[RMDB]
RNA sequence: GGGAACGACUCGAGUAGAGUCGAAAAUCAAACGAUUUCGAUCGUUUGAAACGGACCACUCCUGCGGGAGUUAAGGCCAAACGGACAGCCGGGUCCACUGCCAGUCAUUCGGUUUCGACCGAAUGAAUUACACUAUACGGUUCGCCGUAUAGUGUAAAAAAGAAACAACAACAACAAC
Reactivity to DMS in 0.01 (KOAc 150mM, MgCl2 10mM, bicine 150mM(pH8.5), 24C), signal-to-noise 7, nucleotides 027 to 126: u010c000a000a000a010c000g010a010u000u000u010c180g010a020u000c000g000u000u000u000g000a020a090a110c220g000g000a020c010c010a070c010u000c000c000u010g030c170g020g010g010a020g010u000u010a040a040g020g020c010c010a040a060a090c170g010g000a020c040a300g000c020c010g000g010g000u000c000c010a080c150u010g000c000c020a060g000u000c000a010u000u010c000g010g010u000u000u010c230g000a020c000c000g010a010a000u000g000a030a060
Reactivity to 2A3 in 0.01 (KOAc 150mM, MgCl2 10mM, bicine 150mM(pH8.5), 24C), signal-to-noise 5, nucleotides 027 to 126: u020c000a000a000a010c010g010a010u030u060u180c200g100a020u010c000g000u010u000u010g010a020a000a000c070g010g010a010c000c000a010c000u010c010c000u040g010c270g060g010g000a020g000u020u160a110a060g000g000c010c010a090a100a020c090g020g010a020c010a010g010c000c000g020g000g000u000c000c010a010c020u040g000c010c000a010g060u020c000a000u000u000c000g010g050u040u050u140c230g110a020c010c000g000a000a000u000g000a000a000
An RNA of 177 nucleotides, treated with DMS and 2A3 and read out base by base. For DMS the reverse transcriptase was MarathonRT. The RNA was probed in 150 mM KOAc, 10 mM MgCl2 and 150 mM bicine (pH 8.5) at 24 C. For DMS, 10,692 sequencing reads were counted. The data come from the RNA Mapping Database (RMDB), library M2PK50. Values cover nucleotides 27 to 126.